[RMDB]
RNA sequence: GGGAACGACUCGAGUAGAGUCGAAAAUACGCACACAAGUUGAUUUAGCUAAAGAAGUCUUUUCUAUACCAGUAGAUAUUUGCUCACAACCUUUAGCCACUACUCUCAUAGGAGAACUUGCAAGCUAAUAUUUACGUGCUUUCGAGCACGUAAAUAUAAAAGAAACAACAACAACAAC
Reactivity to 2A3 in 0.01 (KOAc 150mM, MgCl2 10mM, bicine 150mM(pH8.5), 24C), signal-to-noise 6, nucleotides 027 to 126: u080a010c060g040c030a020c000a000c010a110a070g010u040u030g110a160u090u090u180a020g000c020u080a090a020a030g080a070a020g030u040c070u050u090u030u010c010u030a020u020a090c020c060a030g020u010a010g060a030u100a140u110u120u140g040c020u050c050a080c020a060a160c020c000u070u100u070a010g000c000c000a050c010u100a050c000u010c000u000c030a060u110a040g110g020a020g020a050a010c020u020u040g040c030a060a050g000c000u040a040
Reactivity to DMS in 0.01 (KOAc 150mM, MgCl2 10mM, bicine 150mM(pH8.5), 24C), signal-to-noise 3, nucleotides 027 to 126: u020a090c180g030c030a060c130a060c070a070a090g010u000u000g000a170u020u000u010a080g010c010u000a030a060a250g000a030a070g030u000c070u000u000u000u000c000u000a010u010a140c250c300a080g000u020a020g030a060u000a040u000u070u020g000c020u000c160a040c240a070a110c150c020u010u000u010a020g020c010c150a030c020u000a080c030u000c070u040c180a110u010a010g000g010a030g030a040a030c000u000u030g010c060a060a080g020c000u000a010

Overview: Conditions: 150 mM KOAc, 10 mM MgCl2 and 150 mM bicine (pH 8.5), 24 C. This 177-nucleotide RNA was probed chemically with 2A3 and DMS. For 2A3, 4,256 sequencing reads were counted. Source: RMDB library OK1LIB, as collected in RNAgym.